[RMDB]
An RNA of 177 nucleotides, treated with DMS and read out base by base. The reactions ran in a buffer of 150 mM KOAc, 10 mM MgCl2 and 150 mM bicine (pH 8.5), at 24 C. For DMS, 1,024 sequencing reads were counted. Source: RMDB library OK2TRN, as collected in RNAgym.

RNA sequence: GGGAACGACUCGAGUAGAGUCGAAAAGGUCUCAGGAACACUGAUGUGGGCAGGAGGGCACGGGACUAGACAGAGGGAGCAGCUGAGUUGUGAUGCAGUUUCAACGGGCUUCGGCCAGCCCCCUGGGGACUUUCCUGGAAUUCGUUCCAGGAAAGUCAAAAGAAACAACAACAACAAC
Reactivity to DMS in 0.01 (KOAc 150mM, MgCl2 10mM, bicine 150mM(pH8.5), 24C), signal-to-noise 1, nucleotides 027 to 126: g000g020u020c030u000c000a000g010g020a060a070c100a110c040u000g010a100u020g020u000g010g010g060c170a060g020g000a110g000g000g010c050a110c110g020g000g010a120c070u000a030g020a080c120a080g000a100g000g040g010a070g020c100a030g040c040u000g030a030g000u020u000g030u000g010a100u000g010c110a060g020u000u000u000c080a050a120c110g020g000g020c040u000u000c090g020g000c000c070a100g010c010c000c010c020c030u010g010g010g000